[RMDB]
RNA sequence: GGGAACGACUCGAGUAGAGUCGAAAAGAAAUUACGUUUCCUUUACACUUCUCAAACCGGGAGCAAGAGAAGCAAAGCAUCCCUCAUAUCCACGAUGGAGGGUGUCGUGGAGUAUACUGUACCAAAAAGAGCGAACACGGCUUCGGCCGUGUUCGAACGUGUUAUUCAUCUUCGGAUGAAUAACACGAAAAGAAACAACAACAACAAC
Reactivity to DMS in 0.01 (KOAc 150mM, MgCl2 10mM, bicine 150mM(pH8.5), 24C), signal-to-noise 1, nucleotides 027 to 156: g010a050a120a160u000u000a090c100g070u000u000u000c000c000u010u000u000a150c050a070c070u010u000c030u010c020a040a120a120c030c030g020g020g000a160g000c060a110a300g010a020g010a000a030g000c040a050a090a180g040c020a020u000c000c010c020u000c080a090u010a110u010c080c080a010c050g000a100u000g020g050a040g020g010g020u030g000u000c020g100u000g000g010a090g000u000a050u000a080c140u000g030u000a070c050c040a040a220a020a120a090g010a120g040c000g000a010a000c000a020c070g000g030c000u000u000c300g000g000c000c010g100u000g000u000u000c000g000a030a070
Reactivity to 2A3 in 0.01 (KOAc 150mM, MgCl2 10mM, bicine 150mM(pH8.5), 24C), signal-to-noise 3, nucleotides 027 to 156: g040a000a050a010u200u110a040c040g010u010u040u040c020c000u030u040u080a060c060a030c010u070u040c040u030c050a160a200a180c070c070g140g000g010a090g020c030a080a020g040a000g010a030a020g020c050a070a050a000g040c020a070u070c030c020c000u070c040a070u120a040u110c010c010a010c030g010a010u040g080g070a060g060g060g010u050g010u000c020g000u010g000g000a010g000u010a020u040a070c110u120g110u150a080c030c040a030a000a060a050a070g100a030g070c000g000a000a000c010a000c000g000g030c000u060u050c180g030g000c000c020g000u000g000u010u010c000g000a000a010
Chemical mapping of a 207-nucleotide RNA with DMS and 2A3. DMS (dimethyl sulfate) methylates the pairing face of unpaired adenines and cytosines. 2A3 is a SHAPE reagent: it acylates the 2'-hydroxyl of flexible nucleotides of all four kinds. The 2A3 profile rests on 2,890 reads. Reactivities are given for positions 27 through 156. The DMS profile rests on 1,636 reads.